[RMDB]
RNA sequence: GGGAACGACUCGAGUAGAGUCGAAAAAGAUGGGAUGGCGACAGGGAAGAGGCGCUCCUCACUUCCCAGACUGGGCGGCCGGUCAGAGGGGCUCCUCACAUCCCAGAUGACGGGCGGCCAGGCAGAGCUCUAACGCUGUAUUCGUACAGCGUUAGAGAAAAGAAACAACAACAACAAC
Reactivity to 2A3 in 0.01 (KOAc 150mM, MgCl2 10mM, bicine 150mM(pH8.5), 24C), signal-to-noise 5, nucleotides 027 to 126: a000g120a080u080g000g000g000a010u030g030g060c070g070a070c110a100g140g030g110a090a110g010a060g010g000c010g000c000u000c010c000u000c020a080c070u050u000c000c000c020a000g020a030c030u040g010g060g020c070g110g070c020c020g020g020u020c030a010g010a000g000g000g000g010c010u030c000c000u020c000a040c010a010u010c010c000c000a010g040a060u080g030a020c040g010g000g000c000g020g020c000c000a020g020g000c020a010g020a010g080
Reactivity to DMS in 0.01 (KOAc 150mM, MgCl2 10mM, bicine 150mM(pH8.5), 24C), signal-to-noise 3, nucleotides 027 to 126: a070g010a110u020g000g010g010a040u000g000g010c080g000a100c150a100g010g000g000a150a130g000a020g000g000c180g000c000u000c000c010u000c010a110c220u000u000c000c000c010a150g020a020c030u000g000g010g000c120g010g000c010c010g010g010u010c020a090g000a030g000g010g000g000c020u010c020c000u000c010a050c060a060u000c000c000c000a070g000a100u040g010a130c100g000g000g000c060g000g000c010c030a050g000g010c080a140g000a080g000
The record gives the reactivity of an RNA of 177 nucleotides to 2A3 and DMS.
2A3 adducts were read by reverse transcription with SuperScript II with manganese.
For 2A3, 5,886 sequencing reads were counted.
Values are in units of 0.01, from 0 to 300, in steps of 10.